[RMDB]
Chemical mapping of a 177-nucleotide RNA with 2A3. For 2A3 the reverse transcriptase was SuperScript II with manganese. It was measured as part of the RMDB library OK1LIB.
RNA sequence: GGGAACGACUCGAGUAGAGUCGAAAACACUUAUAACACGUCAAAUCAUCUACUUGUGAAACCUAUGUGAAUUAUUAUGGAGGUGGAUGGGUUUCAAUGCGUACUAAGAUAGUACAGCUUCCUGUUAAUAGUGCAGGAUCUUCGGAUCCUGCACUAUAAAAGAAACAACAACAACAAC
Reactivity to 2A3 in 0.01 (KOAc 150mM, MgCl2 10mM, bicine 150mM(pH8.5), 24C), signal-to-noise 1, nucleotides 027 to 126: c000a000c000u060u060a210u000a000a000c000a020c020g120u100c040a000a000a040u000c000a000u000c000u000a060c000u110u190g090u040g000a100a000a000c000c040u020a000u000g300u060g210a300a000u100u160a040u290u060a040u300g290g000a000g050g000u190g110g120a140u000g000g060g000u110u000u010c120a000a060u080g060c040g000u000a000c000u040a160a000g020a190u120a190g140u000a000c040a000g000c100u040u100c000c000u000g040u120u000a100